Source: RMDB library 15KLIB, as collected in RNAgym. Structure probing data (2A3 and DMS) for a 170-nucleotide construct. DMS (dimethyl sulfate) methylates the pairing face of unpaired adenines and cytosines. The reactions ran in a buffer of 150 mM KOAc, 10 mM MgCl2 and 150 mM bicine (pH 8.5), at 24 C. For 2A3, 21,009 sequencing reads were counted. 2A3 is a SHAPE reagent: it acylates the 2'-hydroxyl of flexible nucleotides of all four kinds.

RNA sequence: GGGAACGACUCGAGUAGAGUCGAAAACCUCUUAGUGUCAUCCCACUGUGUGCUUCAAAUAAACUUCGCGUUGUAAUUCCUGACUUCACCGUCUGGAAUCAGGUAGUCACAUAUCCCUCGCUUAACUAACGGUUCUACUUCGGUAGAACCAAAAGAAACAACAACAACAAC
Reactivity to 2A3 in 0.01 (KOAc 150mM, MgCl2 10mM, bicine 150mM(pH8.5), 24C), signal-to-noise 9, nucleotides 027 to 129: c010c000u010c030u030u080a030g000u000g020u050c010a050u040c000c010c000a040c080u040g020u000g010u020g090c020u060u080c080a060a110a220u270a090a090a040c020u090u070c060g010c020g130u040u060g060u080a050a030u040u010c010c000u020g030a030c000u060u040c110a040c040c060g020u010c010u030g010g020a000a010u040c000a010g030g050u060a040g040u090c010a000c000a040u070a060u040c010c020c000u040c030g070c070u080u080a100a050c030u030a030a000c070
Reactivity to DMS in 0.01 (KOAc 150mM, MgCl2 10mM, bicine 150mM(pH8.5), 24C), signal-to-noise 8, nucleotides 027 to 129: c050c010u030c100u040u030a060g030u000g050u030c040a090u000c000c040c020a170c140u000g010u000g010u020g040c020u000u000c100a080a050a140u090a050a060a040c000u060u030c120g010c150g000u090u030g000u030a110a000u000u030c040c010u030g050a060c050u040u060c200a120c210c170g010u030c040u020g010g010a000a000u010c090a070g050g040u000a010g030u040c080a030c030a060u010a060u020c010c000c010u000c110g050c130u000u000a050a070c060u010a090a120c170